The record gives the reactivity of an RNA of 177 nucleotides to DMS. DMS adducts were read by reverse transcription with MarathonRT. It was measured as part of the RMDB library OK2TST. The reactions ran in a buffer of 150 mM KOAc, 10 mM MgCl2 and 150 mM bicine (pH 8.5), at 24 C.
RNA sequence: GGGAACGACUCGAGUAGAGUCGAAAAGGGAUGCAACUGCUCUCCAGGUUUCAUCCAGUUGGACCGCCAACUGUUGUACGCCUUUAUGUCCAUCGGUGGGAUGUCCCAACGCCCGGCAGACGAGGACGCAGGAAAGCGUAUUCGUACGCUUUCCUGCAAAAGAAACAACAACAACAAC
Reactivity to DMS in 0.01 (KOAc 150mM, MgCl2 10mM, bicine 150mM(pH8.5), 24C), signal-to-noise 1, nucleotides 027 to 126: g020g020g030a060u000g000c130a040a120c110u000g020c080u000c040u020c060c010a260g000g010u000u000u000c030a020u000c090c050a150g030u000u000g010g000a070c090c240g020c000c000a040a030c050u000g010u000u010g000u030a050c110g000c120c070u020u020u000a090u030g000u000c030c030a090u010c050g010g050u000g020g000g000a070u000g000u000c000c000c000a060a060c050g030c030c020c000g010g030c110a090g000a080c100g010a080g020g000a080c120